RNA sequence: GGGAACGACUCGAGUAGAGUCGAAAAGCAUUGGGAAAGUUAAUCAAAAGUGCAUCAAAACUUACCCUAAACGAAAUCAAAAUCGUUAUGAUGCACUUUUGACAUCGAUUAAGAUGAAUAGACACAAGACGUACAUACGGUUCGCCGUAUGUACGUCAAAAGAAACAACAACAACAAC
Reactivity to DMS in 0.01 (KOAc 150mM, MgCl2 10mM, bicine 150mM(pH8.5), 24C), signal-to-noise 2, nucleotides 027 to 126: g010c130a130u010u000g020g000g010a060a120a160g030u010u010a030a180u000c000a000a000a010a040g010u000g010c000a000u000c020a030a110a080a130c100u000u010a090c040c050c020u000a010a050a000c020g030a010a070a060u000c300a110a120a100a020u000c010g000u000u000a210u000g020a030u000g010c000a020c000u000u020u000u000g010a020c060a020u000c010g000a130u000u010a060a080g000a010u000g000a060a070u000a140g000a130c070a060c090a140a080
Reactivity to 2A3 in 0.01 (KOAc 150mM, MgCl2 10mM, bicine 150mM(pH8.5), 24C), signal-to-noise 2, nucleotides 027 to 126: g020c050a110u140u180g060g000g030a070a130a080g080u080u140a130a040u010c020a010a000a000a010g000u000g000c000a000u020c000a010a040a000a130c040u060u060a110c010c030c000u020a050a030a010c030g030a070a020a050u180c140a090a020a030a090u020c000g000u030u060a020u060g000a030u000g020c000a000c000u000u000u000u000g000a000c010a000u030c030g130a160u160u240a130a030g000a020u000g000a020a060u090a070g100a000c000a000c010a060a050